[RMDB]
RNA sequence: GGGAACGACUCGAGUAGAGUCGAAAAGGGCAUCGUACUGCCCGAUGCCGACCCCGCCCGUAUCGCAGAGGGGCUUUUCUGGGGUGCUUUCAUCAAUAGCGGGCAGACCUGCGCGGCCUUGAAGCGACGACUAGGGAGGGUUCGCCCUCCCUAGUCGAAAAGAAACAACAACAACAAC
Reactivity to DMS in 0.01 (KOAc 150mM, MgCl2 10mM, bicine 150mM(pH8.5), 24C), signal-to-noise 1, nucleotides 027 to 126: g020g000g010c000a000u000c030g030u020a200c080u000g010c050c060c000g000a000u000g020c020c020g000a130c080c010c010c020g010c020c010c030g020u030a100u010c010g000c050a040g000a300g000g040g010g010c050u010u010u000u000c080u020g030g030g010g010u010g010c030u000u000u000c080a090u010c240a070a060u010a130g020c080g010g010g000c000a010g020a110c110c020u020g000c220g010c170g000g000c000c010u000u010g000a260a160g000c030g000a130
Structure probing data (DMS) for a 177-nucleotide construct. For DMS the reverse transcriptase was MarathonRT. DMS (dimethyl sulfate) methylates the pairing face of unpaired adenines and cytosines.